Chemical mapping of a 177-nucleotide RNA with DMS and 2A3. For 2A3, 11,069 sequencing reads were counted. Source: RMDB library VIROID, as collected in RNAgym. For 2A3 the reverse transcriptase was SuperScript II with manganese. High DMS reactivity at an A or C suggests that its Watson-Crick edge is free.

RNA sequence: GGGAACGACUCGAGUAGAGUCGAAAAUCCUGUGGUUACACCUCGGAAGGCCUCCGUGGACCUGCAGAGAAAAGAAGAAGGGCCCAGAGGGGAAUGAGCCUCGUCGUCGACGAAGGGGUGCAUUCCGCUGUCAAUAAAAGUUCGCUUUUAUUGACAGAAAAGAAACAACAACAACAAC
Reactivity to DMS in 0.01 (KOAc 150mM, MgCl2 10mM, bicine 150mM(pH8.5), 24C), signal-to-noise 8, nucleotides 027 to 126: u000c010c000u000g020u000g010g010u000u010a110c180a140c020c020u000c040g010g010a140a090g010g010c160c010u000c030c040g010u000g000g010a070c100c010u000g000c080a090g000a120g000a070a050a100a110g000a100a100g010a100a110g000g000g000c020c010c030a090g000a090g010g010g010g000a010a010u000g000a180g000c010c000u000c000g010u000c020g010u010c220g010a110c050g020a040a050g010g000g000g010u000g000c000a020u000u000c000c020g000
Reactivity to 2A3 in 0.01 (KOAc 150mM, MgCl2 10mM, bicine 150mM(pH8.5), 24C), signal-to-noise 5, nucleotides 027 to 126: u010c000c000u010g010u040g040g010u060u120a050c050a080c050c010u000c010g020g050a130a100g070g030c020c010u000c020c010g010u060g020g010a070c000c010u020g000c050a010g090a010g010a100a180a030a010g070a070a010g030a030a060g050g020g010c020c020c020a050g070a090g080g130g010g000a000a030u030g010a020g000c000c010u000c010g030u000c000g030u040c100g050a300c050g010a050a040g020g010g000g000u020g020c000a020u020u020c010c010g000